[RMDB]
RNA sequence: GGGAACGACUCGAGUAGAGUCGAAAAGCAAAGAAAUUUUAUCCCAAUAAGGCGAAGUAAGCAAGUCGACCCAACGCGAGGGCGCUAGCGAGCUUACCAGCCCUAGCAGACUAAUAGCGAGAAAAAAACGUUGUAUUCGAUUCGUCGAAUACAACGUAAAAGAAACAACAACAACAAC
Reactivity to 2A3 in 0.01 (KOAc 150mM, MgCl2 10mM, bicine 150mM(pH8.5), 24C), signal-to-noise 1, nucleotides 027 to 126: g030c020a060a130a000g140a120a200a050u080u140u090u110a090u080c000c030c010a000a050u120a020a000g010g000c000g010a010a010g010u050a000a000g000c080a040a000g050u060c030g120a300c000c000c050a110a090c110g010c040g230a120g000g010g000c050g000c010u020a010g050c000g050a010g000c000u000u000a030c000c000a030g000c030c010c000u030a030g000c000a010g090a120c050u150a020a140u090a180g030c030g040a070g280a050a120a020a000a000a000
Reactivity to DMS in 0.01 (KOAc 150mM, MgCl2 10mM, bicine 150mM(pH8.5), 24C), signal-to-noise 2, nucleotides 027 to 126: g010c130a010a100a090g000a030a100a090u000u000u000u000a120u020c010c000c000a090a130u000a090a110g000g000c000g010a080a260g040u000a010a040g000c030a060a200g000u010c010g000a200c040c010c020a080a070c090g000c140g020a120g000g000g020c040g000c150u000a020g000c030g010a300g010c000u000u000a000c030c040a300g000c030c020c010u000a050g010c010a020g010a080c150u040a080a060u000a100g000c020g010a140g020a010a020a020a070a070a040
Chemical mapping of a 177-nucleotide RNA with 2A3 and DMS. Values cover nucleotides 27 to 126. High DMS reactivity at an A or C suggests that its Watson-Crick edge is free. The RNA was probed in 150 mM KOAc, 10 mM MgCl2 and 150 mM bicine (pH 8.5) at 24 C.